[RMDB]
RNA sequence: GGGAACGACUCGAGUAGAGUCGAAAAAGAGCUCAUUGAUGCCGUCAAAUUCACGCCGGCGCUGACCGGUCCACACGCGCGGCUCGGCGGUGCCGCGGUCGGCGAGUCGGCCACCGAGGAGCCGAUGGUCCUAACGAAGGUUCGCCUUCGUUAGGACAAAAGAAACAACAACAACAAC
Reactivity to 2A3 in 0.01 (KOAc 150mM, MgCl2 10mM, bicine 150mM(pH8.5), 24C), signal-to-noise 2, nucleotides 027 to 126: a000g090a030g010c020u010c030a100u060u160g080a050u140g040c000c000g020u060c030a060a110a130u180u090c070a090c130g040c080c080g050g010c030g080c030u010g030a290c000c000g000g030u050c000c000a030c030a060c080g220c020g020c070g030g010c060u060c010g080g000c040g010g000u010g000c040c000g020c020g010g020u050c000g030g010c030g000a030g030u070c010g000g030c030c020a080c040c050g070a070g040g030a020g000c000c000g030a030u070g180
Reactivity to DMS in 0.01 (KOAc 150mM, MgCl2 10mM, bicine 150mM(pH8.5), 24C), signal-to-noise 2, nucleotides 027 to 126: a060g010a130g000c020u000c020a080u010u010g010a040u010g000c010c010g000u010c060a090a150a120u010u010c050a140c060g020c100c010g040g030c010g000c060u020g010a090c020c020g000g000u000c000c040a060c070a100c240g020c220g000c030g000g000c020u000c000g010g000c020g000g000u000g010c030c020g010c060g020g000u000c050g020g000c130g000a200g020u000c000g000g010c110c060a100c070c030g010a050g010g010a170g000c010c030g000a100u010g020
Notes: The record gives the reactivity of an RNA of 177 nucleotides to 2A3 and DMS. For 2A3, 2,268 sequencing reads were counted. The RNA was probed in 150 mM KOAc, 10 mM MgCl2 and 150 mM bicine (pH 8.5) at 24 C.